This 177-nucleotide RNA was probed chemically with DMS and 2A3. The data come from the RNA Mapping Database (RMDB), library OK2TST. Values cover nucleotides 27 to 126. For DMS the reverse transcriptase was MarathonRT. The reactions ran in a buffer of 150 mM KOAc, 10 mM MgCl2 and 150 mM bicine (pH 8.5), at 24 C. The DMS profile rests on 3,745 reads.

RNA sequence: GGGAACGACUCGAGUAGAGUCGAAAAUACAGCUACAAAAUAAAGAAGAGGUAUCCGGCUGGGAUCUAUUCCAUGCGUUAUUGAUUUGCUCAGCCAAUGAUGCGGCUAAUGCUCUGGCUAUCGCGUGGACAAUGUAUCCAUUCGUGGAUACAUUGUCAAAAGAAACAACAACAACAAC
Reactivity to DMS in 0.01 (KOAc 150mM, MgCl2 10mM, bicine 150mM(pH8.5), 24C), signal-to-noise 4, nucleotides 027 to 126: u000a080c040a070g000c040u000a120c110a070a070a100a070u020a070a090a140g000a130a070g010a060g020g010u010a020u010c060c100g020g020c020u000g000g020g000a050u000c070u010a090u010u020c030c040a030u010g010c030g010u000u000a040u010u010g010a080u010u010u010g020c040u000c150a060g010c020c010a050a100u000g000a050u010g000c150g010g000c090u030a050a040u000g000c020u000c040u000g010g010c200u000a030u000c040g010c060g000u000g010
Reactivity to 2A3 in 0.01 (KOAc 150mM, MgCl2 10mM, bicine 150mM(pH8.5), 24C), signal-to-noise 4, nucleotides 027 to 126: u050a000c020a020g030c010u050a060c070a090a220a100a120u270a130a140a030g080a050a020g020a020g040g040u030a020u030c040c030g040g030c080u040g030g040g000a030u010c020u090a100u150u020c040c020a060u060g030c040g060u080u060a070u080u130g060a050u050u040u190g010c020u020c040a010g020c010c000a000a060u180g040a040u080g040c030g020g020c040u070a070a060u110g000c000u040c030u060g050g000c010u020a020u100c030g010c030g000u020g030